RNA sequence: GGGAACGACUCGAGUAGAGUCGAAAAUAAUUGCAACUGGUUUUGAUGGGAAUCAGCCUUACACCAAGCAAAAAGCAGGUGCUAAAUUAUCUCCUCAAUCUCUAUAUCGACAAACACCAAACAAAGACAUAUCGCACAUAUUCGUAUGUGCGAUAUGAAAAGAAACAACAACAACAAC
Reactivity to 2A3 in 0.01 (KOAc 150mM, MgCl2 10mM, bicine 150mM(pH8.5), 24C), signal-to-noise 3, nucleotides 027 to 126: u010a000a030u050u070g000c020a050a040c030u030g050g110u020u050u030u060g060a050u040g020g000g040a020a100u100c020a030g060c020c030u070u070a050c070a050c040c010a050a060g060c020a040a090a040a030a010g110c040a020g010g020u010g000c010u070a070a080a010u050u030a020u010c040u040c010c000u020c020a100a140u030c030u000c010u040a060u010a090u110c020g040a030c040a030a120a020c060a040c070c000a050a070a040c040a050a090a020g080a020
Reactivity to DMS in 0.01 (KOAc 150mM, MgCl2 10mM, bicine 150mM(pH8.5), 24C), signal-to-noise 4, nucleotides 027 to 126: u000a040a070u000u020g020c040a050a060c030u000g010g000u010u010u000u000g000a100u010g000g000g010a180a100u000c110a040g010c040c070u000u010a100c140a150c010c010a030a130g010c050a020a060a040a070a090g020c020a040g000g000u000g020c040u010a060a040a030u000u000a030u000c070u000c050c020u010c070a040a110u010c030u000c010u000a030u000a070u000c040g010a080c140a070a060a090c130a120c050c040a050a050a100c160a030a090a140g010a170